[RMDB]
RNA sequence: GGGAACGACUCGAGUAGAGUCGAAAACGAUGAGGGGAGAAGAGAAGUGGGCAGGUGGGUCGAAGACGCCCGCCCCAUGGCGUACGCCCGUCGCUUGUUUGCAUGCGGGGGUCAGACCCCCUUACCGAUCCACCACUAUGUUCGCAUAGUGGUGGAUAAAAGAAACAACAACAACAAC
Reactivity to 2A3 in 0.01 (KOAc 150mM, MgCl2 10mM, bicine 150mM(pH8.5), 24C), signal-to-noise 2, nucleotides 027 to 126: c060g070a100u170g060a120g000g030g030g000a100g000a130a030g090a020g000a140a010g050u110g050g000g000c070a010g020g010u110g040g060g040u030c050g030a100a010g040a020c040g080c000c050c000g020c030c000c000c010a010u030g080g040c040g010u050a100c080g090c000c030c020g050u020c010g000c020u060u150g090u300u240u200g050c090a070u140g010c030g020g010g000g020g010u000c010a000g000a030c000c000c000c000c000u010u030a020c000c020g010
Reactivity to DMS in 0.01 (KOAc 150mM, MgCl2 10mM, bicine 150mM(pH8.5), 24C), signal-to-noise 2, nucleotides 027 to 126: c070g010a080u010g000a060g000g020g010g010a110g010a110a060g000a090g020a070a080g020u000g010g030g010c140a020g030g020u000g020g000g010u010c040g000a080a110g020a050c040g010c000c000c050g030c010c080c080c030a020u000g000g000c050g010u000a070c140g000c060c040c070g040u000c090g000c030u010u000g010u020u010u020g030c100a050u000g010c020g000g000g000g030g020u010c030a130g000a240c050c000c000c000c010u000u000a050c050c070g000

Structure probing data (2A3 and DMS) for a 177-nucleotide construct. Conditions: 150 mM KOAc, 10 mM MgCl2 and 150 mM bicine (pH 8.5), 24 C.